Chemical mapping of a 177-nucleotide RNA with 2A3 and DMS. For 2A3, 1,088 sequencing reads were counted. DMS adducts were read by reverse transcription with MarathonRT. Values cover nucleotides 27 to 126. 2A3 adducts were read by reverse transcription with SuperScript II with manganese.
[RMDB]
RNA sequence: GGGAACGACUCGAGUAGAGUCGAAAAGAGGCAUCGCACGAGGUGGACGGGUUGCUCGCCACGUAUCGGGUGGGAAGGCUCUACCGGGAGGGGGUCCGUGUGGUGCUCGCCGGAAGGACCAACGCGGGUCACCGUCGUAUUUCGAUACGACGGUGACAAAAGAAACAACAACAACAAC
Reactivity to 2A3 in 0.01 (KOAc 150mM, MgCl2 10mM, bicine 150mM(pH8.5), 24C), signal-to-noise 1, nucleotides 027 to 126: g170a020g000g020c040a010u000c020g040c040a040c010g010a100g110g040u050g040g050a130c030g030g000g050u210u140g110c030u040c010g040c010c000a030c030g000u070a110u170c060g010g050g180u300g010g020g000a020a060g110g030c080u130c050u210a130c040c060g000g020g050a300g020g010g000g040g010u040c040c000g020u000g000u040g030g000u000g020c010u010c020g030c060c000g050g020a040a020g010g050a020c000c050a030a040c110g000c020g040g000
Reactivity to DMS in 0.01 (KOAc 150mM, MgCl2 10mM, bicine 150mM(pH8.5), 24C), signal-to-noise 1, nucleotides 027 to 126: g020a230g010g000c040a000u000c000g000c050a040c030g000a140g000g020u010g010g010a060c040g020g010g030u000u000g000c040u000c050g020c030c010a050c040g010u000a010u000c180g000g000g000u000g000g000g000a170a070g020g010c070u000c100u000a060c060c040g050g000g000a190g000g000g000g000g000u010c010c040g020u020g020u000g000g010u010g000c030u000c060g000c040c000g000g000a110a030g000g010a010c030c030a040a090c080g040c090g000g010